The record gives the reactivity of an RNA of 177 nucleotides to DMS. Conditions: 150 mM KOAc, 10 mM MgCl2 and 150 mM bicine (pH 8.5), 24 C. Source: RMDB library OK2TST, as collected in RNAgym.
[RMDB]
RNA sequence: GGGAACGACUCGAGUAGAGUCGAAAAUUUUAAGCUUCUAGUGUUGCUUGGAUCUCUGAGAUAGAGAGGGGACUGUGGUUGCACAAAUCUAUUUGUUUGUACAUUUUACUUUUGUCUUAGAUGCACCCUAUUACGCGUCUUUCGAGACGCGUAAUAGAAAAGAAACAACAACAACAAC
Reactivity to DMS in 0.01 (KOAc 150mM, MgCl2 10mM, bicine 150mM(pH8.5), 24C), signal-to-noise 2, nucleotides 027 to 126: u010u000u010u000a100a080g000c030u010u000c050u000a140g010u010g020u000u000g000c010u010u000g010g010a070u010c050u000c010u010g020a090g000a090u020a070g010a060g020a080g010g010g020g000a110c180u010g010u000g000g010u000u010g030c080a050c040a030a040a030u010c140u000a090u000u010u000g000u010u000u010g000u000a060c030a050u020u000u000u010a070c030u010u020u000u000g020u010c050u000u000a060g010a090u000g010c090a060c050c110
Record summary:
Reactivities are given for positions 27 through 126.